Structure probing data (2A3 and DMS) for a 177-nucleotide construct.
RNA sequence: GGGAACGACUCGAGUAGAGUCGAAAAGUGAUUAUACGAUUACAGUCUUUGUUACUGUCAACCUUGCAAAAGUUUGCACUUAUGCCAUCUUUGCUUACUCACCACAGCUUACACUUGUGUUUCCGGACACUCCUUAUAUCUUCGGAUAUAAGGAGUGAAAAGAAACAACAACAACAAC
Reactivity to 2A3 in 0.01 (KOAc 150mM, MgCl2 10mM, bicine 150mM(pH8.5), 24C), signal-to-noise 8, nucleotides 027 to 126: g020u020g020a060u060u200a100u070a190c080g030a040u060u070a020c010a020g020u010c050u090u280u190g080u150u080a010c010u010g010u020c020a050a060c020c020u030u050g000c020a000a020a080a150g030u030u050u050g030c020a030c050u120u060a050u190g020c000c000a030u000c030u030u030u020g010c010u030u040a050c010u020c030a030c010c010a040c020a040g040c020u080u120a040c070a030c040u070u070g040u010g000u060u000u000c000c000g000g000a000
Reactivity to DMS in 0.01 (KOAc 150mM, MgCl2 10mM, bicine 150mM(pH8.5), 24C), signal-to-noise 4, nucleotides 027 to 126: g000u000g000a050u000u010a100u010a100c140g010a110u000u010a040c020a050g010u010c040u010u010u000g010u000u000a030c020u010g000u000c110a030a070c070c010u000u010g000c130a050a070a080a060g020u000u000u000g010c020a070c120u010u000a070u000g000c010c070a060u000c040u010u000u000g010c040u000u010a070c070u000c050a050c020c050a050c070a050g000c060u010u000a060c150a070c180u010u000g030u000g000u000u000u000c010c000g000g000a300

Reactivities are given for positions 27 through 126.
The RNA was probed in 150 mM KOAc, 10 mM MgCl2 and 150 mM bicine (pH 8.5) at 24 C.
The 2A3 profile rests on 12,863 reads.
It was measured as part of the RMDB library 15KREP.